[RMDB]
RNA sequence: GGGAACGACUCGAGUAGAGUCGAAAAGAAAAGGAGCUUCAGAGAACUCAGAGGAAGAAGAAGAGGCUUGAGGAGGAAAACCCAUGGCUGGGUAACGUUCUUGGAAUUGUCCGCCAGAAGGCAGGAGGUCUGUACUAUAGUUCGCUAUAGUACAGACAAAAGAAACAACAACAACAAC
Reactivity to 2A3 in 0.01 (KOAc 150mM, MgCl2 10mM, bicine 150mM(pH8.5), 24C), signal-to-noise 2, nucleotides 027 to 126: g010a030a110a010a030g050g020a020g050c000u100u060c070a020g020a020g020a140a030c040u040c070a030g030a030g070g030a050a000g030a030a010g020a040a000g010a030g020g070c000u100u070g040a030g020g030a010g010g040a010a040a060a010c010c020c000a030u050g090g000c120u080g030g000g020u000a030a020c020g010u030u050c000u110u120g090g020a070a020u060u070g040u000c000c030g000c050c000a060g050a140a050g040g010c050a050g000g010a020g020
Reactivity to DMS in 0.01 (KOAc 150mM, MgCl2 10mM, bicine 150mM(pH8.5), 24C), signal-to-noise 2, nucleotides 027 to 126: g020a080a040a080a170g010g000a080g040c070u000u000c030a080g020a160g020a050a090c060u000c060a060g020a080g010g010a050a020g000a070a050g020a110a090g000a080g010g000c120u000u000g010a030g000g000a050g000g000a050a070a090a080c020c000c030a090u000g010g000c070u010g030g000g000u010a050a070c060g020u000u000c040u020u010g000g020a050a040u010u000g020u000c030c030g000c010c020a100g010a050a070g010g030c060a050g020g000a120g010